[RMDB]
RNA sequence: GGGAACGACUCGAGUAGAGUCGAAAAGCGUACUACUAAGCUAUGAAGCAUCGACCCAGGCGAUAAGUACUUUCCCAAAUAGGAAAGUACUUUUGACGCCUGGGAUGUGGAGCUUAGUAUCGCAAAACUGCGGCAUCCGUUCGCGGAUGCCGCAGAAGAUAGAACAUUACUUCGGUAAUGUUCUAUCAAAAGAAACAACAACAACAAC
Reactivity to 2A3 in 0.01 (KOAc 150mM, MgCl2 10mM, bicine 150mM(pH8.5), 24C), signal-to-noise 2, nucleotides 027 to 156: g000c020g070u090a060c000u000a020c000u010a050a000g000c010u060a140u300g030a010a010g040c000a010u060c080g160a200c020c000c000a000g000g010c020g050a070u000a070a000g000u000a000c000u010u000u000c020c000c030a120a300a070u250a080g000g000a000a000a000g000u010a000c000u020u000u000u010g060a010c000g030c020c000u000g010g000g000a000u000g000u010g010g030a010g000c040u000u000a000g000u040a000u200c020g000c010a000a130a000a000c000u000g030c000g000g000c020a000u060c010c060g040u090u170c260g000c030g090g000a000u000g000c000c000g010c000a000g000a000a000